Structure probing data (2A3) for a 207-nucleotide construct.
2A3 adducts were read by reverse transcription with SuperScript II with manganese.
Reactivities are given for positions 27 through 156.
RNA sequence: GGGAACGACUCGAGUAGAGUCGAAAAUAGCUGCAACAUUAUUUGAGUAUCCUGAAAACGGGCUGUUCAGAAUGGUGUUGCCGUAUAAAAUUGUAGGAGUGCAUAGUGGCCCGUAUAGCAGGCAUUAGAGAGCUACAGAUGUUCGCAUCUGUAGCAAGUUGGAUUAUGCGUUCGCGCAUAAUCCAACAAAAGAAACAACAACAACAAC
Reactivity to 2A3 in 0.01 (KOAc 150mM, MgCl2 10mM, bicine 150mM(pH8.5), 24C), signal-to-noise 1, nucleotides 027 to 156: u070a010g050c000u030g000c010a010a000c000a020u100u070a050u020u060u020g000a010g000u080a030u030c000c000u000g090a070a030a040a100c070g000g000g000c000u010g000u040u000c020a020g080a260a070u020g020g000u000g010u020u020g010c000c000g050u010a070u050a020a080a030a030u140u190g050u140a040g000g070a020g040u070g050c010a020u020a090g040u020g070g040c070c020c010g050u160a040u050a050g020c050a020g000g090c000a000u040u090a040g050a020g020a020g070c000u000a000c000a000g020a000u000g010u070u090c160g000c080a000u000c000u020g000u030a000g000c010a000a010